[RMDB]
RNA sequence: GGGAACGACUCGAGUAGAGUCGAAAAGGAGGAACCUUCGGGUUCCUCCCAUUACCGAGAACCUUGCUCGGUAUAAACAAGGAACCCUUGCAAACAAGGGAAAUAUUCACGUCUUCGGACGUGAAAACGUAAAUUGAGCGUUCGCGCUCAAUUUACGAAAAGAAACAACAACAACAAC
Reactivity to DMS in 0.01 (KOAc 150mM, MgCl2 10mM, bicine 150mM(pH8.5), 24C), signal-to-noise 1, nucleotides 027 to 126: g000g000a000g000g010a050a000c000c000u000u000c220g000g000g030u020u000c000c000u000c000c000c060a030u000u000a100c020c000g010a000g000a120a170c000c000u000u000g040c010u000c000g030g020u000a050u030a020a130a100c120a040a050g000g060a300a150c000c010c000u020u020g020c220a010a250a240c060a000a000g000g000g000a000a120a140u010a110u020u000c000a000c010g000u000c000u000u020c290g030g030a000c000g060u010g000a000a000a060a200